[RMDB]
RNA sequence: GGGAACGACUCGAGUAGAGUCGAAAAGUGCCUCAUCGGCGGGCCUUUCCAGAUGGCUGGAGCGGCGCAGCAACCCGCGCAACCGGGCGACCAGCUCCUCGAGGCUGAACGGCUUUGUCAUGUAGUCCUCGGCUAAACAUUUCGAUGUUUAGCCGAGAAAAGAAACAACAACAACAAC
Reactivity to DMS in 0.01 (KOAc 150mM, MgCl2 10mM, bicine 150mM(pH8.5), 24C), signal-to-noise 1, nucleotides 027 to 126: g000u030g010c020c000u000c060a050u030c120g030g040c040g000g000g000c010c010u000u000u000c070c070a080g000a140u010g000g000c100u020g010g020a110g020c040g000g010c070g000c150a140g010c120a110a130c150c000c000g010c110g010c110a080a050c200c040g000g000g000c020g040a140c050c000a100g050c010u000c030c050u040c080g000a150g020g010c010u030g000a020a070c260g010g000c040u000u000u000g010u010c050a050u000g000u000a070g000u010c120
Record summary: This 177-nucleotide RNA was probed chemically with DMS. Values cover nucleotides 27 to 126. Source: RMDB library OK2TST, as collected in RNAgym. The DMS profile rests on 955 reads.